[RMDB]
RNA sequence: GGGAACGACUCGAGUAGAGUCGAAAAGAUAUGGAUUAGCUUUGAUCGAUGGUCCACGACGAUCUCGGAAACGAGAUUAGUGGCCAUCGGGAGCUAAUCCUAAGUCAAAUCCUACUUCGGUAGGAAAGUCAUCAUUACCGUUCGCGGUAAUGAUGACAAAAGAAACAACAACAACAAC
Reactivity to DMS in 0.01 (KOAc 150mM, MgCl2 10mM, bicine 150mM(pH8.5), 24C), signal-to-noise 2, nucleotides 027 to 126: g000a040u000a300u020g010g010a020u000u000a000g000c000u000u000u010g000a110u020c010g000a000u000g000g010u000c000c020a030c000g010a120c300g000a030u000c000u000c000g010g010a110a070a220c000g000a010g000a010u000u000a090g040u000g000g000c000c000a000u000c000g010g000g020a000g000c000u000a000a000u000c000c000u000a000a060g010u010c030a060a130a100u000c000c000u000a000c000u010u010c190g010g020u000a000g010g000a010a040a050
Reactivity to 2A3 in 0.01 (KOAc 150mM, MgCl2 10mM, bicine 150mM(pH8.5), 24C), signal-to-noise 3, nucleotides 027 to 126: g050a000u060a040u160g000g020a000u000u010a000g010c030u210u140u170g150a170u300c030g000a010u010g010g050u250c040c030a020c010g100a060c240g030a020u000c000u000c000g010g000a080a070a050c030g000a000g010a010u000u020a040g000u010g000g000c020c000a010u000c000g000g010g000a000g000c000u000a000a000u000c000c000u000a050a000g010u010c000a050a030a180u020c020c000u000a000c010u050u090c300g080g000u030a040g000g000a070a050a020